Structure probing data (DMS) for a 177-nucleotide construct. Conditions: 150 mM KOAc, 10 mM MgCl2 and 150 mM bicine (pH 8.5), 24 C. The data come from the RNA Mapping Database (RMDB), library RFM100.

RNA sequence: GGGAACGACUCGAGUAGAGUCGAAAAGGAUGAUUCAAAUCAUCGGUAGGGGAGCGUCCCAGCGGGGGCGAAGCGGGAGGGGAACCGACCGUGGACCUUCUGGGAGCGAGAAUGCUGGCAUGAGUAGUAAAAUUGAUCGCUUCGGCGAUCAAUUUUAAAAAGAAACAACAACAACAAC
Reactivity to DMS in 0.01 (KOAc 150mM, MgCl2 10mM, bicine 150mM(pH8.5), 24C), signal-to-noise 1, nucleotides 027 to 126: g060g000a000u000g000a010u000u100c300a100a060a100u000c000a000u000c000g000g000u000a080g000g000g000g050a220g000c100g000u000c000c000c020a060g130c080g000g010g060g000g000c150g000a080a150g010c040g000g000g020a290g020g000g030g100a050a030c000c160g000a060c020c000g000u000g050g000a080c040c030u000u000c090u000g000g010g000a260g050c000g000a070g000a010a040u020g040c010u000g000g010c170a010u110g050a010g000u080a080g000